[RMDB]
RNA sequence: GGGAACGACUCGAGUAGAGUCGAAAACUUCAAUACCAUAUCAAACUUCGGUGACAGUCUGUCUGAUAUCGGUAACAAGCAUAUGAUUACUGUCGAUAUGAGUAAUAAAACCUCAGGAAAAAUUGGCCUAUGUCCUUAUGUUCGCAUAAGGACAUAGAAAAGAAACAACAACAACAAC
Reactivity to 2A3 in 0.01 (KOAc 150mM, MgCl2 10mM, bicine 150mM(pH8.5), 24C), signal-to-noise 9, nucleotides 027 to 126: c020u120u100c060a040a070u040a070c000c020a010u020a020u050c040a040a100a120c060u180u070c090g080g010u080g020a020c010a020g060u030c030u090g020u010c020u010g020a010u010a030u070c110g020g030u090a070a070c080a070a040g110c050a040u130a040u220g070a060u070u130a050c020u050g030u050c010g010a020u020a080u110g050a030g030u080a080a190u080a160a090a030a040c000c020u030c030a020g080g120a050a060a040a040a080u110u130g100g010c000
Reactivity to DMS in 0.01 (KOAc 150mM, MgCl2 10mM, bicine 150mM(pH8.5), 24C), signal-to-noise 4, nucleotides 027 to 126: c050u000u030c140a160a180u010a010c020c000a030u010a000u010c020a010a110a080c050u040u010c100g010g010u030g000a040c060a010g050u000c030u010g000u000c040u010g000a010u010a030u000c150g000g010u000a040a040c220a080a090g050c120a050u020a050u040g010a060u010u000a010c020u000g010u010c030g010a080u020a090u020g000a030g020u000a080a110u030a060a050a090a110c230c000u010c030a040g000g000a040a080a020a060a090u030u010g000g000c180
Source information:
An RNA of 177 nucleotides, treated with 2A3 and DMS and read out base by base. The DMS profile rests on 7,278 reads. Conditions: 150 mM KOAc, 10 mM MgCl2 and 150 mM bicine (pH 8.5), 24 C. It was measured as part of the RMDB library OK1LIB.